[RMDB]
RNA sequence: GGGAACGACUCGAGUAGAGUCGAAAAGAUAUGGAAUGCCUUUAUAGAUCUAUGAAGGCCUGAACUACCUACAGCUCGGAAACGAGCUGUAGGCAGGCUGGAGAUCAUAGAGGGCAUUCCUAAGUCAGGUUCAUUUUAAGUUCGCUUAAAAUGAACCAAAAGAAACAACAACAACAAC
Reactivity to 2A3 in 0.01 (KOAc 150mM, MgCl2 10mM, bicine 150mM(pH8.5), 24C), signal-to-noise 2, nucleotides 027 to 126: g020a040u090a080u160g020g000a040a000u000g010c000c010u060u040u040a300u150a230g050a010u000c020u070a300u300g080a020a010g010g000c000c020u010g010a090a080c070u110a120c110c010u010a000c000a010g010c000u000c010g070g000a090a100a050c020g000a000g060c020u000g000u010a000g020g000c000a010g010g000c000u010g020g000a010g000a010u010c020a000u060a050g200a040g040g000g040c010a000u010u000c000c000u000a070a010g050u000c060a050
Reactivity to DMS in 0.01 (KOAc 150mM, MgCl2 10mM, bicine 150mM(pH8.5), 24C), signal-to-noise 3, nucleotides 027 to 126: g000a050u010a300u000g010g000a030a000u000g000c000c000u010u000u000a120u010a210g010a000u000c000u000a160u020g010a220a190g000g000c000c010u010g000a100a060c110u010a300c010c000u010a000c000a010g000c010u000c010g000g000a080a090a230c010g010a000g030c000u000g000u000a000g000g000c000a000g000g000c010u000g000g000a030g000a010u000c000a070u000a070g010a020g000g010g000c000a010u000u000c000c000u000a010a070g000u000c070a110